[RMDB]
RNA sequence: GGGAACGACUCGAGUAGAGUCGAAAAUUGAAGGUAAAACAGCCUGUGGGUGAAACACACCCACAGGGCCCAUUGGGCGCUAGCACUCUGGUAUCACGGUAGCUUUGUGCGCCUGUUUUACCGAAGGCGGCGCAGAUGUUCGCAUCUGCGAAAAGAAACAACAACAACAAC
Reactivity to 2A3 in 0.01 (KOAc 150mM, MgCl2 10mM, bicine 150mM(pH8.5), 24C), signal-to-noise 7, nucleotides 027 to 129: u120u130g070a100a020g000g000u000a000a000a010a000c000a000g010c000c000u000g010u000g000g000g000u020g030a050a070a010c140a020c000a000c050c000c000a000c000a000g000g000g000c000c000c000a020u260u300g000g000g000c020g000c080u100a040g000c010a000c000u000c010u010g080g140u040a020u040c030a050c170g140g010u020a030g080c000u000u000u020g000u000g010c010g000c000c000u000g000u000u010u000u000a000c000c000g000a000a000g060g040c090g010g040
Reactivity to DMS in 0.01 (KOAc 150mM, MgCl2 10mM, bicine 150mM(pH8.5), 24C), signal-to-noise 5, nucleotides 027 to 129: u050u050g020a140a110g020g020u000a010a000a040a020c020a000g000c030c000u030g010u000g000g000g000u000g010a090a140a110c270a190c000a030c040c000c010a010c020a000g010g000g000c000c010c010a070u030u070g000g000g000c000g030c010u010a060g040c020a010c020u010c020u020g000g040u000a010u020c050a140c210g030g010u000a020g030c020u000u000u000g010u000g000c020g010c020c010u020g000u000u000u000u000a020c000c030g020a050a030g020g020c060g000g050